[RMDB]
RNA sequence: GGGAACGACUCGAGUAGAGUCGAAAACGCCGGCGCGGCCUGGGCGUUAAACGCACCAUGGUCGGCCAGCACAUUGGACCGGAUCGCCAGGAUCUUGCCGUCACGGUUGGCGGCAAUCUCGCCGACCUAACAUCGGAGUCUUCGGACUCCGAUGUUAAAAAGAAACAACAACAACAAC
Reactivity to 2A3 in 0.01 (KOAc 150mM, MgCl2 10mM, bicine 150mM(pH8.5), 24C), signal-to-noise 2, nucleotides 027 to 126: c120g030c000c020g000g040c160g000c010g120g000c020c000u000g010g040g010c010g010u070u160a180a050a020c030g010c000a160c150c000a070u270g010g000u000c000g020g030c000c000a000g010c020a010c000a060u110u210g050g000a080c010c010g070g020a040u090c050g050c050c020a110g060g000a010u040c020u040u040g030c000c000g010u040c000a040c150g250g020u080u040g050g000c000g000g010c000a000a060u030c030u040c010g020c000c000g020a000c010c000
Reactivity to DMS in 0.01 (KOAc 150mM, MgCl2 10mM, bicine 150mM(pH8.5), 24C), signal-to-noise 1, nucleotides 027 to 126: c130g000c030c020g070g020c020g000c000g040g000c090c010u040g050g010g020c010g000u010u030a020a080a100c040g040c040a140c000c000a070u010g050g020u000c000g010g000c010c010a000g000c070a080c120a130u000u000g030g010a130c030c020g000g000a090u040c010g000c080c020a050g000g000a040u000c030u000u070g000c000c000g010u000c030a100c300g030g020u030u000g000g010c000g000g000c060a000a000u020c000u000c040g000c180c000g000a010c000c050
About this RNA: Structure probing data (2A3 and DMS) for a 177-nucleotide construct. For DMS, 1,776 sequencing reads were counted. DMS (dimethyl sulfate) methylates the pairing face of unpaired adenines and cytosines. The reactions ran in a buffer of 150 mM KOAc, 10 mM MgCl2 and 150 mM bicine (pH 8.5), at 24 C. For 2A3 the reverse transcriptase was SuperScript II with manganese.